[RMDB]
RNA sequence: GGGAACGACUCGAGUAGAGUCGAAAAGAAGACGUGACGAAAAGUCACGAAAAAGAGCUAGCAAGCGGCAGCUAGCAAAGAUCGAAAGAUCAAAUGCCGCAAAGUGCAGGGAGACCUGCACAAAAGAAUGAGUAGGCUGAUUCGUCAGCCUACUCAUAAAAGAAACAACAACAACAAC
Reactivity to 2A3 in 0.01 (KOAc 150mM, MgCl2 10mM, bicine 150mM(pH8.5), 24C), signal-to-noise 3, nucleotides 027 to 126: g130a040a000g160a030c010g000u000g010a000c010g090a010a000a030a300g000u020c010a010c010g000a000a000a000a000a000g130a000g010c000u000a010g000c030a300a030g000c000g010g000c000a000g000c000u010a000g000c080a100a110a000g020a010u020c010g020a050a040a030g030a000u000c010a000a000a000u040g000c010c010g000c000a020a070a000g000u010g010c000a000g000g020g020a070g010a050c000c000u000g010c000a000c000a000a050a000a000g040a000
Reactivity to DMS in 0.01 (KOAc 150mM, MgCl2 10mM, bicine 150mM(pH8.5), 24C), signal-to-noise 2, nucleotides 027 to 126: g000a170a070g000a090c040g050u000g000a000c000g000a150a050a040a230g000u000c000a000c000g010a070a040a120a180a080g000a150g040c020u010a000g010c000a020a160g070c000g010g000c020a070g000c000u000a000g000c000a040a050a110g020a000u000c020g030a180a070a220g000a000u000c000a070a120a050u000g030c000c020g000c000a010a020a160g000u010g020c000a010g000g050g000a300g000a170c010c000u000g000c040a000c030a000a030a070a070g050a120